[RMDB]
The record gives the reactivity of an RNA of 207 nucleotides to 2A3.
The reactions ran in a buffer of 150 mM KOAc, 10 mM MgCl2 and 150 mM bicine (pH 8.5), at 24 C.
RNA sequence: GGGAACGACUCGAGUAGAGUCGAAAACUGGUCUAUGGACACUGUCAAGAGCAUUAGAGCGGUGCAAGUUGCUCUGUGCGCAAUCCUCAACACUAGCACCCCAUUAUUUACAGCUCAGAUCCCUUGUCCUUCGAACUGAUCUCGGAUUCAUCUGGCAGAUAAAUGGGCGGUUCGCCGCCCAUUUAUCAAAAGAAACAACAACAACAAC
Reactivity to 2A3 in 0.01 (KOAc 150mM, MgCl2 10mM, bicine 150mM(pH8.5), 24C), signal-to-noise 1, nucleotides 027 to 156: c000u060g000g000u070c040u130a050u140g020g000a040c040a040c060u030g020u160c100a150a090g000a000g080c030a030u080u300a050g030a030g040c090g010g000u040g040c020a070a020g020u070u060g030c010u020c050u010g060u130g000c100g000c030a010a300u120c000c020u000c020a040a190c000a060c060u030a000g020c020a050c000c030c000c010a030u090u080a070u110u200u030a070c030a020g000c000u010c040a010g000a130u060c000c000c020u050u010g010u050c020c060u000u030c040g100a070a060c040u070g050a080u080c030u040c080g100g020a100u090u030c000a010u040c070u010g020g000c080a020